Description:
An RNA of 177 nucleotides, treated with DMS and read out base by base. The data come from the RNA Mapping Database (RMDB), library OK2TRN. The reactions ran in a buffer of 150 mM KOAc, 10 mM MgCl2 and 150 mM bicine (pH 8.5), at 24 C.

RNA sequence: GGGAACGACUCGAGUAGAGUCGAAAAAUAUAUAGAAGGUACUAACCCAAAGCUGGAUAAAAGUUUCCCCCUUUAUUGGCCAGGUGUGGUGGUUCACGCCUAUAAUCCUAGUACUUUGGGAGGCUAAAGCCUUUCAUAAUUUCGAUUAUGAAAGGCUAAAAGAAACAACAACAACAAC
Reactivity to DMS in 0.01 (KOAc 150mM, MgCl2 10mM, bicine 150mM(pH8.5), 24C), signal-to-noise 2, nucleotides 027 to 126: a080u020a060u010a140u020a100g020a080a040g010g000u000a040c040u000a120a160c010c010c020a060a090a080g020c100u020g010g020a080u010a050a070a060a080g000u000u000u000c020c000c010c190c050u000u010u000a070u020u010g020g020c040c070a030g010g010u000g050u000g000g000u010g010g000u010u010c020a020c020g000c000c010u000a090u010a060a090u000c000c010u000a050g010u000a030c030u000u000u000g000g010g020a110g000g020c030u010a050a080